This 207-nucleotide RNA was probed chemically with 2A3. The reactions ran in a buffer of 150 mM KOAc, 10 mM MgCl2 and 150 mM bicine (pH 8.5), at 24 C.
[RMDB]
RNA sequence: GGGAACGACUCGAGUAGAGUCGAAAAUUUCAGGACAAGAGAACUCGCCAAAGUUCGGACUGGUAGCGGUGUAUCAAUCAACGACAGUGGAAUGGUCGUUGACUUGCUAAACGAUUAUGAUGCGAAGGAGAUUCGGCGUGCGGUGAUUCGAGAAUGAACGACUGCCUACGUUCGCGUAGGCAGUCGUAAAAGAAACAACAACAACAAC
Reactivity to 2A3 in 0.01 (KOAc 150mM, MgCl2 10mM, bicine 150mM(pH8.5), 24C), signal-to-noise 1, nucleotides 027 to 156: u020u020u020c010a010g050g020a040c060a100a010g060a020g010a110a100c030u010c050g140c000c000a080a020a000g000u060u150c060g000g000a000c020u010g060g050u060a090g000c020g070g010u030g030u060a040u110c060a040a000u000c000a000a010c000g000a000c000a090g070u160g060g290a200a150u260g120g000u000c000g000u000u010g000a020c050u010u070g030c010u040a070a000a000c060g020a000u000u110a040u300g160a070u120g030c020g020a090a000g000g050a020g020a080u100u120c020g020g010c040g000u040g000c000g100g050u040g030a070u000u060c000g010a000g010a100a020u190g030a070

For 2A3, 508 sequencing reads were counted.